[RMDB]
RNA sequence: GGGAACGACUCGAGUAGAGUCGAAAAAGGGAAUAUGUGCGGCAAACGGGAAUCCCACAGGUGGAGGCCGAUGAGUCGUUACUCAGGACACUGCAAGAUGCAAAUGUCCUGGCCACACCAACGGCCUCAGCUCCAGCUAGUUCGCUAGCUGGAGCUGAAAAGAAACAACAACAACAAC
Reactivity to 2A3 in 0.01 (KOAc 150mM, MgCl2 10mM, bicine 150mM(pH8.5), 24C), signal-to-noise 2, nucleotides 027 to 126: a000g090g000g000a150a000u090a100u260g150u060g000c070g010g000c020a000a110a110c020g020g000g160a000a000u000c080c050c020a000c120a060g140g000u070g060g050a080g000g070c020c020g030a060u060g000a000g010u010c020g020u120u010a070c060u070c030a000g010g000a000c000a000c010u000g010c040a080a160g200a300u270g190c000a030a010a070u090g000u000c000c000u000g000g000c050c000a010c000a020c020c000a020a000c020g120g000c000c000u000